Description:
The record gives the reactivity of an RNA of 207 nucleotides to DMS and 2A3. The 2A3 profile rests on 551 reads. It was measured as part of the RMDB library OK3TST. The DMS profile rests on 3,350 reads.
RNA sequence: GGGAACGACUCGAGUAGAGUCGAAAAUUCAAUGGAAACCGCCCCUCUCCUAGGUUAGCUGAUCAAAGAUGGUGUUCAUGCAUAUCGAUUCAGCAAUGAGAUUUUAAAGCUGGUGUCCCUAACUUGGGCCAGUGUUGGGGUCCAACGAGCAAUGGAAAUUUAAUGCUGAGUUCGCUCAGCAUUAAAUAAAAGAAACAACAACAACAAC
Reactivity to DMS in 0.01 (KOAc 150mM, MgCl2 10mM, bicine 150mM(pH8.5), 24C), signal-to-noise 2, nucleotides 027 to 156: u000u010c060a110a150u000g010g020a040a090a080c050c050g020c050c000c030c020u010c030u000c020c040u000a100g020g010u000u000a080g010c050u000g000a060u010c180a050a080a170g020a080u000g040g060u010g010u000u010c150a130u010g030c040a060u000a080u000c010g030a140u000u000c020a060g000c010a070a110u000g010a080g000a090u010u000u010u000a030a090a060g000c030u000g030g010u000g000u000c010c000c000u000a040a070c090u000u020g000g010g010c020c000a000g010u000g030u000u010g020g000g030g000u000c000c040a030a080c070g000a120g010c060a080a100u000g000g000a080a110
Reactivity to 2A3 in 0.01 (KOAc 150mM, MgCl2 10mM, bicine 150mM(pH8.5), 24C), signal-to-noise 2, nucleotides 027 to 156: u140u050c070a010a090u150g050g030a190a090a040c040c020g050c010c000c050c000u010c010u050c000c000u080a070g040g040u090u120a010g060c000u010g010a010u040c130a120a130a020g040a030u100g050g050u040g000u100u270c090a110u300g080c000a000u000a010u150c010g000a000u100u050c020a000g000c030a020a030u110g000a070g000a030u090u200u210u270a080a050a000g050c050u020g000g080u050g040u080c020c000c010u050a080a070c010u050u000g000g000g000c000c000a030g000u020g040u040u030g020g000g000g000u020c020c000a000a000c010g030a000g110c010a020a060u070g070g000a150a090